This 177-nucleotide RNA was probed chemically with 2A3 and DMS.
RNA sequence: GGGAACGACUCGAGUAGAGUCGAAAAUGUGCGGCUCUACGCGAAUUUAUAUCCGUGUUUUGCGUAGGUCGCAGAGGCAUGCACUGCCAUGCCUGGCGGUGCAGGAGGAGGUAGCUUCCCGCACUGAAGUCUCUCGAGCAUUCGUGCUUGAGGGGCUAAAAGAAACAACAACAACAAC
Reactivity to 2A3 in 0.01 (KOAc 150mM, MgCl2 10mM, bicine 150mM(pH8.5), 24C), signal-to-noise 9, nucleotides 027 to 126: u260g020u030g010c000g000g000c030u020c010u230a000c000g010c010g010a010a010u060u230u070a280u080a100u160c120c110g090u110g080u100u020u030u140g000c000g000u010a010g010g000u000c000g000c000a000g010a000g010g010c030a020u020g000c040a060c280u150g030c080c000a020u060g060c000c050u010g030g020c020g000g000u020g000c030a020g010g010a050g020g010a030g040g110u120a040g050c010u010u000c000c000c000g000c000a040c020u040g050a040
Reactivity to DMS in 0.01 (KOAc 150mM, MgCl2 10mM, bicine 150mM(pH8.5), 24C), signal-to-noise 9, nucleotides 027 to 126: u030g010u010g000c000g010g010c000u050c010u000a000c000g010c000g010a010a020u020u020u030a100u030a090u040c150c170g010u030g010u000u000u010u010g020c000g010u000a010g010g010u000c000g010c000a010g000a040g010g010c030a060u000g010c020a140c130u020g000c060c000a020u010g010c110c060u000g010g010c020g000g010u000g000c010a040g000g010a080g010g000a140g000g010u030a120g010c050u000u000c000c000c020g020c090a050c030u010g000a150

For 2A3 the reverse transcriptase was SuperScript II with manganese. Conditions: 150 mM KOAc, 10 mM MgCl2 and 150 mM bicine (pH 8.5), 24 C.